[RMDB]
RNA sequence: GGGAACGACUCGAGUAGAGUCGAAAAGACGCGAGAGACGCGAGACGCGCAAUGGUAGAAGCCGCAAUAGAUGAUACGAAGGAAGAGGCAAGACGGAGAGCGCGCAACUAUCUCCAAUAACCAAGAAACCCAUAGUCGGUUUCGACCGACUAUGGGUAAAAGAAACAACAACAACAAC
Reactivity to 2A3 in 0.01 (KOAc 150mM, MgCl2 10mM, bicine 150mM(pH8.5), 24C), signal-to-noise 2, nucleotides 027 to 126: g100a020c000g080c080g080a020g030a020g050a180c020g000c000g010a110g070a000c000g050c000g010c050a000a230u120g010g000u050a030g040a090a000g000c000c000g010c010a050a000u050a040g300a100u120g000a060u140a030c050g080a060a000g010g000a000a150g050a030g180g000c010a050a030g000a000c080g000g000a050g050a000g050c170g010c020g000c030a030a000c000u010a000u000c020u000c000c000a000a060u090a070a000c060c040a000a120g050a180a100
Reactivity to DMS in 0.01 (KOAc 150mM, MgCl2 10mM, bicine 150mM(pH8.5), 24C), signal-to-noise 1, nucleotides 027 to 126: g010a180c140g000c060g030a130g000a030g090a010c030g000c050g010a160g030a160c000g140c030g000c030a020a000u010g000g000u000a030g040a140a110g050c020c150g000c010a090a090u050a120g000a030u150g000a090u080a090c000g000a080a110g000g000a010a090g010a120g020g000c020a100a110g000a090c160g040g000a000g000a050g000c050g010c090g000c090a110a070c030u000a030u030c000u030c000c000a100a180u010a040a180c280c040a080a030g000a150a010
Source: RMDB library OK1LIB, as collected in RNAgym. Chemical mapping of a 177-nucleotide RNA with 2A3 and DMS. The RNA was probed in 150 mM KOAc, 10 mM MgCl2 and 150 mM bicine (pH 8.5) at 24 C. For 2A3, 1,188 sequencing reads were counted. Values are in units of 0.01, from 0 to 300, in steps of 10.